[RMDB]
RNA sequence: GGGAACGACUCGAGUAGAGUCGAAAAUGAUGAAGGGCAUCGCCGCAGAAGGCUGGUUCGACGAUGACGGCAUGAACCAGGCCAUGUGCUUCGGCUCGCUGCCAGUCUGGGCCACCAAACUGGCUAGCUGCAGUGCUAUUUUCGAAUAGCACUGCAGAAAAGAAACAACAACAACAAC
Reactivity to 2A3 in 0.01 (KOAc 150mM, MgCl2 10mM, bicine 150mM(pH8.5), 24C), signal-to-noise 3, nucleotides 027 to 126: u180g050a030u060g030a050a080g020g000g000c020a060u100c070g000c030c030g000c030a020g060a210a030g040g000c030u010g010g010u030u010c010g020a030c040g060a120u210g090a080c060g050g040c090a060u140g020a000a000c020c010a010g060g090c010c000a070u160g030u080g060c000u030u020c030g030g000c020u030c050g030c030u020g000c000c000a000g000u000c010u020g000g040g040c030c010a050c020c010a070a030a010c020u000g030g010c050u070a070g000
Reactivity to DMS in 0.01 (KOAc 150mM, MgCl2 10mM, bicine 150mM(pH8.5), 24C), signal-to-noise 3, nucleotides 027 to 126: u000g000a130u000g010a110a080g020g000g010c030a050u000c110g020c130c060g000c070a050g010a110a120g000g000c020u010g030g000u010u000c020g010a090c090g000a180u010g020a100c140g000g010c100a110u010g000a020a030c010c010a060g010g000c010c010a070u010g000u000g000c030u000u000c060g020g000c040u000c090g020c070u000g010c010c000a010g000u000c040u000g000g010g030c120c160a100c020c010a010a030a010c010u000g000g000c000u020a050g000